[RMDB]
RNA sequence: GGGAACGACUCGAGUAGAGUCGAAAAACGUAUGGGCGCUCGACAGGGCGUCCGCGCAGUGGCGCACGGUCAAGCGGGCAUCGACCUCGGCCGUCUACACGCCGGAUCACAACGAAGUCUGCUCGAAGAUGAUGGUCAGUUUCGACUGACCAUCAUCAAAAGAAACAACAACAACAAC
Reactivity to 2A3 in 0.01 (KOAc 150mM, MgCl2 10mM, bicine 150mM(pH8.5), 24C), signal-to-noise 2, nucleotides 027 to 126: a010c060g030u110a200u300g000g000g030c020g000c000u030c000g230a140c120a190g000g030g000c010g000u000c030c000g000c000g000c000a110g070u150g150g000c000g000c030a030c030g020g100u090c040a060a030g020c080g040g040g000c020a070u090c100g080a130c000c010u020c010g020g040c040c010g020u000c050u120a110c080a030c140g000c000c000g030g020a070u200c080a010c010a180a080c070g050a050a000g090u020c000u000g000c000u010c030g040a040a060
Reactivity to DMS in 0.01 (KOAc 150mM, MgCl2 10mM, bicine 150mM(pH8.5), 24C), signal-to-noise 2, nucleotides 027 to 126: a070c040g010u000a070u010g050g010g000c020g020c000u000c020g000a180c300a130g000g000g000c030g010u000c030c000g010c040g020c090a120g000u010g020g030c060g020c030a080c050g000g000u000c000a090a060g020c080g000g010g010c010a040u000c180g000a080c050c000u000c040g000g000c000c050g010u010c080u000a100c200a100c140g000c040c010g000g010a070u000c060a140c210a050a180c060g000a010a050g000u000c020u010g000c030u000c030g010a070a120
Conditions: 150 mM KOAc, 10 mM MgCl2 and 150 mM bicine (pH 8.5), 24 C.
An RNA of 177 nucleotides, treated with 2A3 and DMS and read out base by base.
It was measured as part of the RMDB library OK2TRN.